[RMDB]
RNA sequence: GGGAACGACUCGAGUAGAGUCGAAAAUGUAUCAUUAGUUCGCGUUGAUUACGUCCCUGCCCUUUGUACACACCGCCCGUCGCGUCUAUUGAUUAGGUAGCAUCAUGAGUGAGGCAGAGGAGAAAUAGCAUGAUUGUAAGUUCGCUUACAAUCAUGCAAAAGAAACAACAACAACAAC
Reactivity to 2A3 in 0.01 (KOAc 150mM, MgCl2 10mM, bicine 150mM(pH8.5), 24C), signal-to-noise 1, nucleotides 027 to 126: u050g010u000a020u050c030a080u120u120a160g130u140u190c140g010c080g130u000u100g020a020u050u070a020c000g100u040c020c010c020u010g020c000c000c000u090u030u090g070u130a050c010a020c030a010c060c040g060c000c050c000g070u050c030g020c020g020u000c000u000a020u080u240g050a100u030u110a060g040g000u020a100g030c020a020u020c000a050u070g010a020g110u070g010a020g010g070c000a000g010a010g060g020a010g010a000a100a000u020a010
Reactivity to DMS in 0.01 (KOAc 150mM, MgCl2 10mM, bicine 150mM(pH8.5), 24C), signal-to-noise 2, nucleotides 027 to 126: u000g010u000a050u000c010a040u010u000a140g020u000u010c060g010c060g010u000u000g000a060u000u000a050c030g030u000c030c010c000u020g000c070c010c020u030u020u000g020u000a140c090a090c030a090c070c020g010c070c040c060g000u000c120g020c020g010u000c030u000a050u000u020g010a100u000u000a050g000g000u010a060g020c050a050u010c020a030u010g000a080g010u010g010a070g010g010c020a050g010a060g010g010a070g000a030a030a080u000a200

The data come from the RNA Mapping Database (RMDB), library RFMREP. This 177-nucleotide RNA was probed chemically with 2A3 and DMS. 2A3 adducts were read by reverse transcription with SuperScript II with manganese. For DMS, 1,838 sequencing reads were counted. Values cover nucleotides 27 to 126. DMS (dimethyl sulfate) methylates the pairing face of unpaired adenines and cytosines. The 2A3 profile rests on 917 reads. DMS adducts were read by reverse transcription with MarathonRT.